An RNA of 177 nucleotides, treated with DMS and 2A3 and read out base by base. The 2A3 profile rests on 115,205 reads. It was measured as part of the RMDB library TTRDEL.

RNA sequence: GGGAACGACUCGAGUAGAGUCGAAAAGAUAUGGAGCAUGACCUCUUUGAUCCGUAACAUCACGUCGGAAACGACGUGUGGGGGAGAGGGAGUGCUCCUAAGUCAAAGCAGGUGUUCGCACCUGCAACAUAUAGACAAAGUUCGCUUUGUCUAUAUGAAAAGAAACAACAACAACAAC
Reactivity to DMS in 0.01 (KOAc 150mM, MgCl2 10mM, bicine 150mM(pH8.5), 24C), signal-to-noise 9, nucleotides 027 to 126: g010a040u000a300u010g000g010a010g020c000a010u000g010a300c010c000u000c000u000u010u010g010a070u000c010c010g010u010a080a140c210a050u010c010a000c000g000u000c000g010g000a100a100a170c000g010a010c000g020u000g010u000g000g000g010g000g000a020g010a010g000g000g000a300g010u000g000c000u000c000c000u000a010a070g010u000c040a090a120a120g000c010a010g000g020u000g010u000u010c230g010c010a010c000c000u000g000c010a030a050
Reactivity to 2A3 in 0.01 (KOAc 150mM, MgCl2 10mM, bicine 150mM(pH8.5), 24C), signal-to-noise 9, nucleotides 027 to 126: g040a010u070a030u170g000g000a010g000c010a010u030g030a050c010c010u040c050u260u300u090g100a100u060c020c020g090u160a090a080c040a150u230c010a020c000g010u000c000g020g040a120a060a050c020g010a000c000g000u000g000u030g000g000g000g000g010a030g000a000g000g020g000a020g000u000g000c000u000c000c000u000a010a000g000u010c020a030a050a020g000c000a000g000g000u020g040u110u210c250g040c100a000c000c000u000g000c000a000a000